[RMDB]
RNA sequence: GGGAACGACUCGAGUAGAGUCGAAAACUCAAAGUUCGCUUUGAGAAAAAGAUAUGGAGUCGACUUGGAUUUAUGGGAGAACCGUGUUCGGAAACGAACACUCAGUAUCCCAUUGUCAGUCGUCUCCUAAGUCAAAAAACACUACUUCGGUAGUGAAGAUAACCUCCCAGUUCGCUGGGAGGUUAUCAAAAGAAACAACAACAACAAC
Reactivity to 2A3 in 0.01 (KOAc 150mM, MgCl2 10mM, bicine 150mM(pH8.5), 24C), signal-to-noise 1, nucleotides 027 to 156: c000u000c000a030a000a000g040u080u180c190g050c180u020u030u020g010a010g050a030a180a050a010a000g040a040u150a040u090g000g000a000g020u010c020g000a020c000u100u120g050g040a050u300u300u120a000u080g000g030g000a020g000a000a000c000c000g000u000g000u000u000c010g020g050a100a070a030c010g000a000a000c000a000c000u000c000a010g010u000a010u000c020c000c000a000u000u000g000u000c000a000g030u000c000g000u010c010u020c000c000u020a050a010g040u000c000a030a060a050a030a080a110c030a000c030u020a010c000u020u080c230g100g000u020a010g000u020g020a030a030